[RMDB]
RNA sequence: GGGAACGACUCGAGUAGAGUCGAAAAGAUAUGGACUAAGCACGUGCUUUCCGUAAGUUCAACAGCCACCGGUCGGAAACGACCGCGUGGACAUGAAUAUCGGAAAGCACGUGCUUAGUCCUAAGUCGUCAAGAUGUAAGUUCGCUUACAUCUUGACAAAAGAAACAACAACAACAAC
Reactivity to DMS in 0.01 (KOAc 150mM, MgCl2 10mM, bicine 150mM(pH8.5), 24C), signal-to-noise 2, nucleotides 027 to 126: g020a060u000a300u040g010g000a020c030u040a000a000g000c000a000c000g010u000g000c010u010u010u000c010c000g010u000a080a240g010u000u020c000a040a120c300a220g010c000c000a010c010c000g030g000u000c000g010g000a150a130a280c000g010a000c000c040g000c270g010u000g000g000a010c140a130u000g000a010a020u000a300u000c000g000g010a000a010a000g000c000a000c000g000u000g000c000u000u000a000g010u000c000c010u000a010a070g010u000c110